Overview
Structure probing data (DMS and 2A3) for a 177-nucleotide construct. For DMS, 951 sequencing reads were counted.

[RMDB]
RNA sequence: GGGAACGACUCGAGUAGAGUCGAAAACCAGGUUCUUCAUUUAAGAUGCUAACUUCAAUGGCAGCGUUAGAAAAUGGUCUGGAUCCAAACUUUACUAUAAAUGACCCUGGGGUUAUAAUGUUAGGUAGGGAUAGUAUGCUUUCGAGCAUACUAUCCCAAAAGAAACAACAACAACAAC
Reactivity to DMS in 0.01 (KOAc 150mM, MgCl2 10mM, bicine 150mM(pH8.5), 24C), signal-to-noise 1, nucleotides 027 to 126: c000c000a180g000g000u000u010c050u000u000c020a070u000u000u000a220a150g000a030u010g000c030u000a070a070c030u020u090c110a190a010u030g020g110c230a010g000c030g000u000u070a000g020a050a040a000a010u000g000g000u000c010u000g030g000a150u000c040c020a110a130a120c060u050u000u000a020c050u030a130u010a000a040a020u020g000a010c100c000c030u000g030g000g000g100u020u000a110u030a050a210u050g000u000u010a060g000g000u000a090
Reactivity to 2A3 in 0.01 (KOAc 150mM, MgCl2 10mM, bicine 150mM(pH8.5), 24C), signal-to-noise 3, nucleotides 027 to 126: c000c000a010g080g010u090u050c010u160u030c010a080u020u000u070a030a040g090a100u020g000c010u010a030a210c000u180u080c170a100a300u150g040g040c040a000g000c050g050u000u070a130g070a060a090a040a050u020g000g060u020c050u040g000g000a030u090c000c000a020a070a030c020u000u270u140a080c020u060a080u130a290a210a030u050g010a000c000c000c030u100g150g020g000g000u000u020a090u050a140a110u230g130u220u070a050g070g140u000a050
The RNA was probed in 150 mM KOAc, 10 mM MgCl2 and 150 mM bicine (pH 8.5) at 24 C. Source: RMDB library OK1LIB, as collected in RNAgym.